[RMDB]
RNA sequence: GGGAACGACUCGAGUAGAGUCGAAAAACGGCUUCGGCCGUGAAAACGCGUACUACAUCACAGUCGAAGAACAUGGCUGGAGGAGCUUCCCAAAUAGGAAGCUCCGAUGAAAGCCAUGGGAGACUGGAUGUAUCGCUGGCUGCGUCUUCGGACGCAAAGUGUAUACAAAGUUCGCUUUGUAUACACUAAAAGAAACAACAACAACAAC
Reactivity to 2A3 in 0.01 (KOAc 150mM, MgCl2 10mM, bicine 150mM(pH8.5), 24C), signal-to-noise 5, nucleotides 027 to 156: a000c020g000g000c000u060u080c230g150g000c000c000g000u010g030a070a060a020a030c080g000c000g050u100a110c050u020a010c020a020u020c030a020c030a300g010u030c050g110a280a050g040a160a040c000a010u000g000g000c010u000g000g000a020g010g000a000g000c010u010u000c000c040c000a170a290a090u200a050g000g000a000a000g000c000u000c000c000g000a010u020g000a020a010a000g000c000c000a000u000g010g000g010a080g000a000c000u000g000g000a000u000g000u000a020u300c000g000c020u020g120g030c090u050g000c000g010u000c010u040u050c240g100g000a000c000g000c000a010a040
Reactivity to DMS in 0.01 (KOAc 150mM, MgCl2 10mM, bicine 150mM(pH8.5), 24C), signal-to-noise 4, nucleotides 027 to 156: a030c010g020g010c020u010u010c260g050g040c000c010g020u000g000a050a050a090a110c070g000c020g020u000a110c090u010a020c020a030u000c000a140c000a020g020u000c000g000a160a190g010a110a130c030a010u000g010g010c000u000g010g000a200g000g010a020g010c000u000u000c000c000c020a060a130a190u010a040g000g000a040a010g010c000u000c010c000g000a030u010g000a140a140a150g010c000c000a010u000g000g020g000a230g010a050c010u000g000g000a030u000g000u000a010u000c020g020c010u010g010g000c050u010g010c010g020u000c010u000u010c230g040g010a040c010g030c010a010a010